[RMDB]
RNA sequence: GGGAACGACUCGAGUAGAGUCGAAAACUCUUACUGUUCGCAGUAAGAGAAUGGGAUUCGAAUCCCUCCCUAACCGCGGGUAAGCGGCCCAAAAAUAAAUUAGAGAGGCGUGCUUCGGCACGCCUAACAGGGACUAAUGAUUCGUCAUUAGUCCCUGAAAAGAAACAACAACAACAAC
Reactivity to 2A3 in 0.01 (KOAc 150mM, MgCl2 10mM, bicine 150mM(pH8.5), 24C), signal-to-noise 2, nucleotides 027 to 126: c000u000c000u000u000a000c000u000g010u020u050c240g000c100a000g000u000a000a010g010a000g030a000a020u040g000g010g000a010u110u190c140g060a110a130u040c020c010c000u010c010c000c000u000a090a050c010c000g040c040g000g070g190u150a180a030g050c010g050g000c020c000c020a040a050a010a000a020u180a060a060a050u230u300a060g010a020g020a010g140g020c020g000u020g020c020u060u040c130g050g000c000a000c000g010c010c020u000a000a000
Reactivity to DMS in 0.01 (KOAc 150mM, MgCl2 10mM, bicine 150mM(pH8.5), 24C), signal-to-noise 2, nucleotides 027 to 126: c020u000c000u000u000a020c000u000g010u000u010c180g030c010a010g020u000a000a010g020a010g020a010a040u010g010g000g010a020u020u050c190g050a180a180u000c000c000c000u010c020c010c000u000a090a190c020c040g030c020g000g020g000u000a080a140g020c000g000g000c050c070c050a010a100a120a090a170u000a030a110a120u010u000a110g000a260g020a060g010g020c010g060u020g010c000u000u000c160g020g040c000a000c000g020c010c000u000a000a030
Description
This 177-nucleotide RNA was probed chemically with 2A3 and DMS. The reactions ran in a buffer of 150 mM KOAc, 10 mM MgCl2 and 150 mM bicine (pH 8.5), at 24 C. The DMS profile rests on 996 reads.